The record gives the reactivity of an RNA of 177 nucleotides to DMS.
The RNA was probed in 150 mM KOAc, 10 mM MgCl2 and 150 mM bicine (pH 8.5) at 24 C.
It was measured as part of the RMDB library OK2TRN.
RNA sequence: GGGAACGACUCGAGUAGAGUCGAAAAGACUGGAGAGAAGUUGGGGACCAUCAUGGAAAGACUUGGGUGCAAGAUAAUGGGCAGUCAUUGAAAAAUGUCUAAGAUGGGCUGGGCGCGGUGACUCACAUCCCUUCAAAGAGUUCGCUCUUUGAAGGGAAAAAGAAACAACAACAACAAC
Reactivity to DMS in 0.01 (KOAc 150mM, MgCl2 10mM, bicine 150mM(pH8.5), 24C), signal-to-noise 2, nucleotides 027 to 126: g020a090c030u000g010g010a080g010a110g010a070a060g000u000u000g000g010g020g010a120c040c100a060u000c050a080u010g000g010a050a120a110g000a080c070u000u000g000g000g010u010g020c040a040a120g000a080u020a050a130u000g000g010g000c040a030g040u000c030a030u000u000g000a020a050a050a040a080u000g010u000c040u010a100a080g000a090u000g000g020g010c130u010g000g010g000c070g030c080g000g000u010g000a070c080u000c060a070c200a100